This 177-nucleotide RNA was probed chemically with 2A3 and DMS. 2A3 adducts were read by reverse transcription with SuperScript II with manganese.

RNA sequence: GGGAACGACUCGAGUAGAGUCGAAAAGACAACCUGGUGCAGCUUGUCACCCAUGACCGGGCUGGCGAAUGGGUGCUAGAAGACCUGCUCGUUGAUGCCGAGCAGCGGCUCGCCGACGAAGGCAUCACAUGACCCUCAUGUUCGCAUGAGGGUCAUGAAAAGAAACAACAACAACAAC
Reactivity to 2A3 in 0.01 (KOAc 150mM, MgCl2 10mM, bicine 150mM(pH8.5), 24C), signal-to-noise 2, nucleotides 027 to 126: g060a040c050a030a060c030c020u030g040g040u080g040c000a010g010c030u110u110g070u230c010a010c030c010c000a030u050g060a070c040c050g030g200g130c110u090g020g030c040g030a060a040u040g010g030g000u020g020c030u080a050g030a140a020g030a080c010c000u010g000c000u010c020g030u020u000g010a020u000g000c000c010g010a000g030c040a010g050c010g000g000c030u020c060g000c030c020g020a060c040g040a020a050g040g020c010a010u020c000a000
Reactivity to DMS in 0.01 (KOAc 150mM, MgCl2 10mM, bicine 150mM(pH8.5), 24C), signal-to-noise 4, nucleotides 027 to 126: g000a080c140a060a110c030c020u000g000g030u010g020c100a050g020c040u010u000g010u010c000a050c000c020c020a040u000g000a130c240c040g010g010g020c140u000g020g020c030g010a150a030u000g010g010g010u000g010c040u010a060g010a080a090g010a080c170c000u000g020c030u000c000g000u010u010g010a010u000g010c030c000g010a030g000c050a050g000c110g010g000c030u000c130g030c020c030g010a090c230g000a130a130g010g000c000a010u000c020a100
Conditions: 150 mM KOAc, 10 mM MgCl2 and 150 mM bicine (pH 8.5), 24 C. It was measured as part of the RMDB library OK2TST.